RNA sequence: GGGAACGACUCGAGUAGAGUCGAAAACUCAAUGUAGGGAAUAACAUUGAAUUGAUACAAAUACCUUUUUCGGUGUAGGGAAAAACACCGAAUUGAUACAAAUACCUUUCUCAAUGUAGGGAAUAAGAAAACAGGCAUCGCUUCGGCGAUGCCUGAACACAACCCAUAGGUUCGCCUAUGGGUUGUGAAAAGAAACAACAACAACAAC
Reactivity to 2A3 in 0.01 (KOAc 150mM, MgCl2 10mM, bicine 150mM(pH8.5), 24C), signal-to-noise 2, nucleotides 027 to 156: c010u000c000a010a020u080g010u060a080g030g010g110a160a160u120a080a050c000a000u000u000g060a080a100u090u070g050a050u150a200c110a040a090a050u140a080c010c000u010u000u040u040u040c020g000g000u000g010u000a020g000g040g020a100a160a020a180a030c020a020c030c020g000a010a020u010u030g000a000u010a050c040a000a090a000u090a090c020c040u010u050u000c050u040c030a140a140u270g000u220a070g030g000g040a040a060u100a030a190g020a020a100a000a010c000a000g000g000c000a000u000c000g050c070u080u080c210g090g000c020g020a000u000g000c010c000u000g010a000a000
This 207-nucleotide RNA was probed chemically with 2A3. For 2A3, 730 sequencing reads were counted. Conditions: 150 mM KOAc, 10 mM MgCl2 and 150 mM bicine (pH 8.5), 24 C. The data come from the RNA Mapping Database (RMDB), library M2RFPK.